[RMDB]
RNA sequence: GGGAACGACUCGAGUAGAGUCGAAAACGACAGCGCGUUGAGCAGCGCCAUAUUCAUUAUCAGCCCGCCGAUAUGGGACAGUAACACCUUUAACGGCAGCGAAUAAAUAAUGCUGAACGCGGUGGGCGCAUUUCUCUCUUUUCGAAGAGAGAAAUGCAAAAGAAACAACAACAACAAC
Reactivity to DMS in 0.01 (KOAc 150mM, MgCl2 10mM, bicine 150mM(pH8.5), 24C), signal-to-noise 3, nucleotides 027 to 126: c040g010a090c140a040g000c030g030c040g000u000u020g010a070g010c070a100g010c080g000c080c120a080u010a040u040u040c070a060u010u050a100u030c140a170g000c010c040c030g040c000c020g000a130u000a040u010g000g050g010a120c120a110g010u040a130a110c300a100c020c000u000u040u000a070a250c020g000g010c000a210g000c030g010a080a110u010a100a050a030u010a050a070u030g010c000u020g000a000a080c000g000c010g000g040u000g000g000g000c020
Reactivity to 2A3 in 0.01 (KOAc 150mM, MgCl2 10mM, bicine 150mM(pH8.5), 24C), signal-to-noise 7, nucleotides 027 to 126: c030g090a020c030a010g020c010g010c010g040u070u110g100a060g060c070a020g020c020g030c040c000a060u080a100u120u180c110a050u030u230a080u120c030a010g020c000c000c040g000c000c010g010a010u030a070u190g020g030g030a070c040a050g100u100a100a050c030a130c060c010u070u120u140a060a010c030g010g000c010a000g020c020g040a040a030u120a150a080a040u210a020a040u130g000c000u010g050a090a010c030g010c000g050g040u010g010g010g010c010

Source: RMDB libraries RFM100 and RFMREP, as collected in RNAgym. This 177-nucleotide RNA was probed chemically with DMS and 2A3. The reactions ran in a buffer of 150 mM KOAc, 10 mM MgCl2 and 150 mM bicine (pH 8.5), at 24 C.